[RMDB]
RNA sequence: GGGAACGACUCGAGUAGAGUCGAAAAGAGCUGAAGGAACUUCUGGAAAAGGAAUUUCGGCAAAUCCUGAAGGUAAGAGUCUCUGACAAGACCAAAGAUAGAGCAUUUGUUUUUCUCAUCAAUAAUCAAUAAGGGUCAGAUUCGUCUGACCCUUAUUAAAAGAAACAACAACAACAAC
Reactivity to DMS in 0.01 (KOAc 150mM, MgCl2 10mM, bicine 150mM(pH8.5), 24C), signal-to-noise 2, nucleotides 027 to 126: g020a300g010c000u000g000a050a040g000g010a300a240c020u000u000c040u010g000g000a110a200a060a070g020g020a050a230u000u020u000c040g050g000c030a050a090a050u000c000c000u000g000a080a090g010g000u000a050a040g000a190g000u010c010u000c090u000g020a100c140a090a080g000a010c040c030a090a080a070g020a060u000a060g020a060g000c150a070u000u020u000g010u000u010u000u000u010c000u000c020a050u010c060a050a120u020a050a060u000c110